The record gives the reactivity of an RNA of 177 nucleotides to 2A3. The RNA was probed in 150 mM KOAc, 10 mM MgCl2 and 150 mM bicine (pH 8.5) at 24 C. For 2A3, 530 sequencing reads were counted. 2A3 adducts were read by reverse transcription with SuperScript II with manganese.

[RMDB]
RNA sequence: GGGAACGACUCGAGUAGAGUCGAAAAGACGCUGCUUUUUGAUCCUUCGAUGUCGGCUCUUCUUAUCAUUGUGAAGCAGAAUUCACAAAGUGUUGGAUUGUUCACCCACUAACAAGGAACGUGAGCUCAGGGGGAUGCAAUUCGUUGCAUCCCCCUGAAAAGAAACAACAACAACAAC
Reactivity to 2A3 in 0.01 (KOAc 150mM, MgCl2 10mM, bicine 150mM(pH8.5), 24C), signal-to-noise 2, nucleotides 027 to 126: g010a040c040g040c150u180g070c000u080u050u000u030u020g010a000u000c040c020u050u000c040g050a080u230g040u000c070g000g090c080u000c000u060u090c040u040u280a240u110c040a130u050u070g000u000g020a000a010g060c170a130g070a300a220u010u000c000a000c000a000a060a000g030u040g000u010u060g020g040a130u090u080g000u020u030c000a080c000c040c010a040c040u090a070a050c050a080a040g010g000a070a000c080g010u040g000a000g040c030u000

Source: RMDB library RFM100, as collected in RNAgym.